[RMDB]
Overview: The record gives the reactivity of an RNA of 177 nucleotides to 2A3. For 2A3, 390 sequencing reads were counted.
RNA sequence: GGGAACGACUCGAGUAGAGUCGAAAAAUGGCUAAAAUCUGAGUUUGAAAGGUGGCCACUAUAAAUUCUUAAAAAGUGGCACCGCAUUUAGCCCCCCUUCGUACCGAUUCUGUUUUCGUCUCAAGCUCCGCUCCAUAUGAUUCGUCAUAUGGAGCGGAAAAGAAACAACAACAACAAC
Reactivity to 2A3 in 0.01 (KOAc 150mM, MgCl2 10mM, bicine 150mM(pH8.5), 24C), signal-to-noise 1, nucleotides 027 to 126: a000u070g010g010c000u090a000a000a120a000u100c070u120g000a060g100u130u230u260g120a090a080a030g050g010u030g090g200c000c000a000c000u010a010u120a000a090a060u080u110c050u050u220a150a060a000a050a060g000u050g040g000c030a000c000c000g000c000a010u000u000u000a000g000c000c000c020c020c000c000u020u040c090g040u010a020c130c000g040a140u090u050c000u000g040u000u020u000u060c120g030u010c040u000c030a150a080g010c020u050